[RMDB]
RNA sequence: GGGAACGACUCGAGUAGAGUCGAAAAACUCACCCAGGCCGUCGUCAACAACACCGUCUUCGGCGUCAACGAUGAAGCAGGCCGCCAUAACGCUCUGAUCGACGAGCUGGCCACUGUGGUCAUCAAAGCAGAUUACUCAUUUCGAUGAGUAAUCUGCAAAAGAAACAACAACAACAAC
Reactivity to 2A3 in 0.01 (KOAc 150mM, MgCl2 10mM, bicine 150mM(pH8.5), 24C), signal-to-noise 5, nucleotides 027 to 126: a000c040u030c020a040c010c010c000a010g080g000c020c000g000u040c000g050u080c000a050a020c010a070a020c030a130c010c050g100u050c040u060u080c050g010g000c000g110u100c020a060a040c070g050a010u070g020a040a010g030c040a020g050g070c000c020g010c020c010a080u130a240a030c070g030c010u020c020u080g170a240u170c080g070a090c070g000a030g020c030u040g030g000c030c000a060c010u030g030u060g070g160u040c000a040u000c000a030a060a040
Reactivity to DMS in 0.01 (KOAc 150mM, MgCl2 10mM, bicine 150mM(pH8.5), 24C), signal-to-noise 3, nucleotides 027 to 126: a060c280u020c190a100c070c050c000a110g000g000c040c000g000u010c000g010u040c040a100a120c260a060a180c100a160c100c120g000u000c060u020u020c010g010g000c090g010u060c090a180a070c170g020a040u000g000a050a200g030c010a020g000g000c110c160g010c010c050a030u000a050a030c160g000c080u000c030u020g020a060u030c090g000a050c140g000a050g000c040u020g030g000c040c030a150c060u000g000u020g010g020u010c040a000u000c020a080a050a110